[RMDB]
RNA sequence: GGGAACGACUCGAGUAGAGUCGAAAAGAAUGUAAGGGCGUAAUCGCGCCUUGACGUGAGUGAGACAAGACAGAACGCUAUCCAAAGUAAGAUAGCAUAGCUCACAAUACGCUGAUCUGUCCUAGAACAGGCAGGUAAAUUUCGAUUUACCUGCCUGAAAAGAAACAACAACAACAAC
Reactivity to 2A3 in 0.01 (KOAc 150mM, MgCl2 10mM, bicine 150mM(pH8.5), 24C), signal-to-noise 2, nucleotides 027 to 126: g020a000a080u180g050u220a020a030g020g020g000c000g000u060a000a220u130c150g010c000g040c000c000u010u010g070a070c000g010u030g000a020g020u030g000a000g000a050c020a120a130g060a050c020a050g070a200a030c080g000c000u000a020u000c000c120a130a110a000g160u100a050a090g060a000u000a000g010c000a000u060a030g020c020u020c000a000c000a010a090u200a010c020g020c070u070g010a140u060c020u000g050u080c000c030u010a030g020a020a020
Reactivity to DMS in 0.01 (KOAc 150mM, MgCl2 10mM, bicine 150mM(pH8.5), 24C), signal-to-noise 4, nucleotides 027 to 126: g000a060a060u020g020u020a050a020g000g000g000c000g030u030a130a210u040c160g020c000g020c000c030u000u000g000a130c000g000u000g010a180g000u000g000a070g000a050c110a070a070g000a140c130a120g010a080a160c160g010c000u000a020u000c000c050a060a060a270g020u060a110a110g010a030u010a000g000c000a100u030a050g010c010u000c010a030c040a140a120u020a020c090g000c050u000g000a180u020c020u030g000u000c000c000u010a130g000a080a130